[RMDB]
The record gives the reactivity of an RNA of 177 nucleotides to 2A3 and DMS. Reactivities are given for positions 27 through 126. The data come from the RNA Mapping Database (RMDB), library OK1LIB. Conditions: 150 mM KOAc, 10 mM MgCl2 and 150 mM bicine (pH 8.5), 24 C.

RNA sequence: GGGAACGACUCGAGUAGAGUCGAAAACUUGAUGUCAUUCGUGAGCGUGGCGCCCGAGGUAGUGGCGACGGCGGCUUCGGAUUUGGCGCGCAUUGGUCCGUCGAUCGAUGCGGUCAACGCAGCGGCGCACGGAGUGCUCCUUCGGGAGCACUCCGUGAAAAGAAACAACAACAACAAC
Reactivity to 2A3 in 0.01 (KOAc 150mM, MgCl2 10mM, bicine 150mM(pH8.5), 24C), signal-to-noise 2, nucleotides 027 to 126: c020u060u100g090a030u100g090u090c040a120u150u090c050g000u060g070a040g090c070g060u040g050g080c000g010c040c010c000g030a040g000g140u100a080g040u000g130g030c030g010a030c010g000g090c000g010g000c000u090u030c020g050g000a030u070u000u100g020g000c170g000c000g000c170a000u000u040g010g000u000c050c030g100u130c260g090a010u000c000g000a020u010g000c000g000g000u120c070a070a010c070g000c030a010g030c000g090g000c000g000
Reactivity to DMS in 0.01 (KOAc 150mM, MgCl2 10mM, bicine 150mM(pH8.5), 24C), signal-to-noise 1, nucleotides 027 to 126: c090u050u020g000a110u000g000u010c010a060u010u000c030g000u000g010a070g030c110g050u000g000g040c000g040c050c000c010g010a170g020g000u000a130g010u000g000g010c040g040a070c160g010g010c030g000g000c030u000u000c010g020g010a160u030u020u030g010g000c000g070c060g050c010a020u020u040g000g000u020c000c300g030u010c160g040a030u000c030g030a070u000g000c010g000g000u010c030a020a080c220g000c030a120g000c100g070g110c050g000